[RMDB]
This 177-nucleotide RNA was probed chemically with DMS and 2A3.
RNA sequence: GGGAACGACUCGAGUAGAGUCGAAAAUGUGGCUUAGCCUGCAGCGCAACAACCUGGCCACCCCGAACGACACCGCGUUCAUCGGGCUGGGCAACUAUCACACGAUCCUGAUCGACCGGUAUUGGUGCGAAUUAUUAAACUUCGGUUUAAUAAUUCGAAAAGAAACAACAACAACAAC
Reactivity to DMS in 0.01 (KOAc 150mM, MgCl2 10mM, bicine 150mM(pH8.5), 24C), signal-to-noise 9, nucleotides 027 to 126: u000g020u010g010g010c020u000u000a070g020c050c030u000g020c130a080g020c090g010c060a090a080c110a090a100c140c060u000g000g000c020c020a080c050c010c020c030g020a070a070c060g000a100c070a060c080c050g010c120g010u000u000c110a090u000c040g000g010g020c120u000g010g000g010c090a050a070c100u000a080u000c080a060c100a100c070g000a070u000c020c010u000g010a080u000c070g020a040c020c010g010g000u010a080u010u000g010g010u000g010
Reactivity to 2A3 in 0.01 (KOAc 150mM, MgCl2 10mM, bicine 150mM(pH8.5), 24C), signal-to-noise 9, nucleotides 027 to 126: u070g000u020g020g000c020u110u170a030g010c020c020u060g060c060a090g040c020g000c070a030a120c020a030a030c080c030u020g030g010c010c000a030c010c000c000c010g020a050a020c040g070a010c020a020c060c050g040c030g060u070u040c020a040u060c040g010g020g000c020u040g010g020g010c020a070a060c080u140a080u200c040a040c020a020c140g040a050u050c010c000u040g010a060u060c040g030a030c030c010g020g030u070a090u090u150g060g000u080g040